[RMDB]
RNA sequence: GGGAACGACUCGAGUAGAGUCGAAAAGGGUCAACCAUGGUUAAGGAACUCGGCACAAUGGCCCCGUAACUUCGGGAGAAGGGGUGCCCCCGCGUACGUGAACCGGCUCGCCCGGGGAGCGGAGGGGCAAUUCGGCGUAAUUCGUUACGCCGAAUUGAAAAGAAACAACAACAACAAC
Reactivity to DMS in 0.01 (KOAc 150mM, MgCl2 10mM, bicine 150mM(pH8.5), 24C), signal-to-noise 9, nucleotides 027 to 126: g010g000g000u010c050a090a120c050c030a070u020g010g010u010u020a110a090g000g010a090a060c040u010c070g000g010c050a060c120a080a080u020g010g010c030c000c000c030g010u010a070a110c080u010u020c080g020g030g020a130g000a080a080g000g000g010g010u010g020c010c000c000c000c050g010c170g010u020a150c020g000u000g010a300a280c000c000g010g000c030u040c270g000c140c000c000g000g000g000g010a300g000c010g000g000a140g020g000g000g000
Reactivity to 2A3 in 0.01 (KOAc 150mM, MgCl2 10mM, bicine 150mM(pH8.5), 24C), signal-to-noise 3, nucleotides 027 to 126: g040g000g020u060c040a060a060c030c020a070u120g110g010u130u130a080a090g050g020a030a030c030u020c060g030g000c040a020c030a090a130u130g090g000c000c000c000c000g020u040a060a070c030u060u090c090g040g010g020a060g030a050a010g030g010g000g000u070g030c000c000c000c010c000g080c060g060u130a070c010g010u050g010a010a010c000c000g000g000c050u110c160g060c020c000c000g000g010g000g000a010g000c000g000g010a050g000g000g000g000
An RNA of 177 nucleotides, treated with DMS and 2A3 and read out base by base.
Values cover nucleotides 27 to 126.
DMS adducts were read by reverse transcription with MarathonRT.
2A3 adducts were read by reverse transcription with SuperScript II with manganese.